[RMDB]
An RNA of 207 nucleotides, treated with 2A3 and read out base by base. The data come from the RNA Mapping Database (RMDB), library M2RFOK. The reactions ran in a buffer of 150 mM KOAc, 10 mM MgCl2 and 150 mM bicine (pH 8.5), at 24 C. For 2A3 the reverse transcriptase was SuperScript II with manganese.
RNA sequence: GGGAACGACUCGAGUAGAGUCGAAAAACAGAAGAAAGGAGUUUAAAUUAGAUUUGCAAACGGACGGUACUAAAUACCGUCACUUUUACGUCUAACUUAUCGUUAACUCUGCAAAAAGAAAACAAGAAAAACAAGCGUGAGUUCGCUCACGCUUGAAGCUUAAGCCCUUGUUCGCAAGGGCUUAAGCAAAAGAAACAACAACAACAAC
Reactivity to 2A3 in 0.01 (KOAc 150mM, MgCl2 10mM, bicine 150mM(pH8.5), 24C), signal-to-noise 1, nucleotides 027 to 156: a000c080a040g100a070a010g030a050a100a050g050g030a020g000u100u180u110a070a080a020u040u030a030g050a030u090u080u230g050c060a000a010a010c040g000g000a000c000g000g030u000a030c010u270a080a100a130u020a010c000c000g010u010c000a060c000u000u000u010u070a010c000g020u000c000u020a060a070c020u030u090a010u100c030g050u000u030a020a010c010u010c000u100g030c050a020a060a030a000a020g120a000a090a000a010c060a020a080g110a100a120a020a000a000c010a000a000g000c050g000u010g000a010g010u080u020c140g090c050u010c010a000c000g010c000u000u000g000a010a000